[RMDB]
RNA sequence: GGGAACGACUCGAGUAGAGUCGAAAACGGUCGGCCCGCCGACGUCCACUUGUGCCGCGCCGGCAACCCGGGGUAGCUGGGUCCGCAUCCAGGUGAUGGUGUCGCGGGCGCCCAAAUCCUCGGGAUCUACUACUAUCCGAUUCGUCGGAUAGUAGUAAAAAGAAACAACAACAACAAC
Reactivity to 2A3 in 0.01 (KOAc 150mM, MgCl2 10mM, bicine 150mM(pH8.5), 24C), signal-to-noise 9, nucleotides 027 to 126: c040g030g030u040c010g050g040c030c040c010g040c030c030g050a050c020g070u110c040c020a110c070u090u130g090u120g080c030c020g010c040g000c020c020g010g010c030a070a120c000c000c010g000g000g000g020u070a040g040c100u040g020g010g020u020c010c010g000c000a060u030c000c010a030g020g150u200g170a160u070g020g050u140g060u180c080g010c010g000g030g010c090g010c000c000c000a030a070a060u130c000c000u010c000g000g000g000a010u000c010
Reactivity to DMS in 0.01 (KOAc 150mM, MgCl2 10mM, bicine 150mM(pH8.5), 24C), signal-to-noise 5, nucleotides 027 to 126: c120g000g010u010c040g000g010c010c030c170g010c040c030g020a060c060g010u000c070c030a080c120u010u010g030u040g020c060c060g020c110g000c030c020g000g000c070a100a080c020c010c010g000g000g000g010u010a040g010c260u000g000g010g010u010c000c020g030c010a140u000c010c030a030g010g030u060g000a160u010g000g010u020g000u030c130g000c000g000g000g000c040g000c020c000c010a020a140a120u010c000c000u000c000g000g000g020a040u040c100